Structure probing data (2A3 and DMS) for a 177-nucleotide construct. DMS adducts were read by reverse transcription with MarathonRT. High 2A3 reactivity points to a flexible backbone, as in loops and unpaired stretches. The RNA was probed in 150 mM KOAc, 10 mM MgCl2 and 150 mM bicine (pH 8.5) at 24 C. Reactivities are rounded to 0.1 and cut off at 0 and 3. For 2A3 the reverse transcriptase was SuperScript II with manganese. Values cover nucleotides 27 to 126.

RNA sequence: GGGAACGACUCGAGUAGAGUCGAAAACUCAUCUAAUCACUCAUUGAUGAAAUUCCAAAUAAGUGACAGCAAAAUUGGAAAUGUGAGGAAGCAGUAUGCACACGUGUUUGCACGUGGGCACGCGCACUCUAGGAGGGCGUUUCGACGCCCUCCUAGAAAAAGAAACAACAACAACAAC
Reactivity to 2A3 in 0.01 (KOAc 150mM, MgCl2 10mM, bicine 150mM(pH8.5), 24C), signal-to-noise 1, nucleotides 027 to 126: c000u020c010a030u000c030u140a130a150u070c040a140c130u070c010a060u020u140g030a040u040g000a120a050a070u070u010c000c000a030a030a030u190a060a040g050u070g270a100c030a030g070c000a010a080a110a130u060u060g050g030a010a040a110u130g030u040g030a040g050g020a080a000g010c050a050g000u070a050u020g030c000a010c000a000c020g010u010g070u140u200u300g110c020a000c000g000u000g000g000g000c000a000c000g000c000g010c010a040c040
Reactivity to DMS in 0.01 (KOAc 150mM, MgCl2 10mM, bicine 150mM(pH8.5), 24C), signal-to-noise 1, nucleotides 027 to 126: c090u000c010a060u030c090u010a160a070u020c100a100c010u000c050a150u000u010g040a050u020g000a090a070a120u000u000c000c010a030a050a040u010a060a120g000u000g050a100c250a020g000c090a040a050a090a130u000u060g000g010a050a130a060u000g080u000g000a010g000g000a070a120g010c000a090g040u010a050u000g020c010a010c000a000c000g010u000g010u010u010u020g070c010a000c010g000u000g000g000g010c000a010c050g010c080g000c050a110c200